[RMDB]
RNA sequence: GGGAACGACUCGAGUAGAGUCGAAAACGGGUGGGGCCGGGAGCAUCCGAGGCACCGCUUGCCUGACAUAACAGCGUAACCGCCCCGCCAUUGUCGCUGUGAUGGACAUGCCCCAGCCAUUUGUCGGUGGAGACUCGUAUUUCGAUACGAGUCUCCAAAAAGAAACAACAACAACAAC
Reactivity to DMS in 0.01 (KOAc 150mM, MgCl2 10mM, bicine 150mM(pH8.5), 24C), signal-to-noise 2, nucleotides 027 to 126: c130g040g000g040u000g010g010g000g000c020c090g020g010g000a240g000c040a070u050c000c070g000a030g020g020c030a030c180c210g020c110u020u070g010c000c000u010g010a130c180a140u030a170a010c130a050g030c040g030u000a140a100c160c020g010c000c020c000c020g010c040c020a000u000u000g000u000c020g000c020u010g030u000g000a060u010g010g000a000c060a060u030g000c040c000c000c040a080g000c030c030a090u000u010u000g000u000c030g000g020
Reactivity to 2A3 in 0.01 (KOAc 150mM, MgCl2 10mM, bicine 150mM(pH8.5), 24C), signal-to-noise 2, nucleotides 027 to 126: c030g020g000g000u040g000g000g000g030c120c000g010g000g010a130g090c020a070u030c000c060g050a120g000g060c080a060c030c060g050c100u040u120g080c000c050u060g040a070c010a180u160a120a020c070a000g000c020g060u010a090a150c020c000g030c000c000c000c000g000c000c020a030u010u180g050u000c010g000c080u040g020u030g120a020u170g030g030a070c110a090u080g030c000c000c000c000a040g000c000c000a040u180u080u100g110u100c040g060g000
This 177-nucleotide RNA was probed chemically with DMS and 2A3. It was measured as part of the RMDB library OK1LIB. Conditions: 150 mM KOAc, 10 mM MgCl2 and 150 mM bicine (pH 8.5), 24 C. 2A3 adducts were read by reverse transcription with SuperScript II with manganese.